[RMDB]
RNA sequence: GGGAACGACUCGAGUAGAGUCGAAAAAAUGGCACUGCAGAGCUGAUGGGCCAUGUACCUAUCCAAAAUGAGAUCCCAUCUUGCACACUGUGCUAAUUUGAGAUUCUCAUGCCUCCUACUUGGUGAGACCGCAUGCCCAGCUUCGGCUGGGCAUGAACCCUUACCUAUGAUUCGUCAUAGGUAAGGGAAAAGAAACAACAACAACAAC
Reactivity to 2A3 in 0.01 (KOAc 150mM, MgCl2 10mM, bicine 150mM(pH8.5), 24C), signal-to-noise 5, nucleotides 027 to 156: a000a000u090g000g010c030a020c060u070g020c080a040g020a030g130c050u060g030a050u050g010g020g000c010c020a030u050g040u070a130c010c040u080a130u140c080c070a040a120a040a050u050g010a050g020a120u070c000c000c000a000u000c010u040u130g000c010a020c020a030c110u130g010u000g000c010u060a030a140u030u030u050g070a100g020a030u190u050c020u010c020a040u080g030c010c020u020c010c000u060a130c070u090u090g040g000u050g030a040g040a060c050c040g020c030a000u000g000c000c000c000a010g000c000u030u050c120g080g000c000u000g000g000g010c000a000u000g000a000a000
Reactivity to DMS in 0.01 (KOAc 150mM, MgCl2 10mM, bicine 150mM(pH8.5), 24C), signal-to-noise 3, nucleotides 027 to 156: a050a070u000g020g020c000a080c030u010g010c040a140g030a100g040c030u010g010a060u010g010g010g030c040c040a090u000g020u000a140c050c010u000a090u020c040c090a060a070a090a050u010g010a050g000a100u000c010c020c000a040u000c050u000u000g000c010a050c040a190c100u000g030u020g000c000u000a030a050u000u000u000g000a110g010a060u010u000c010u000c010a050u010g000c020c010u000c030c010u000a080c130u010u000g010g010u000g010a180g010a130c050c060g000c000a030u000g030c000c000c030a010g020c010u000u000c270g040g010c000u000g020g010g000c000a000u000g010a020a080
An RNA of 207 nucleotides, treated with 2A3 and DMS and read out base by base. 2A3 adducts were read by reverse transcription with SuperScript II with manganese. Reactivities are given for positions 27 through 156.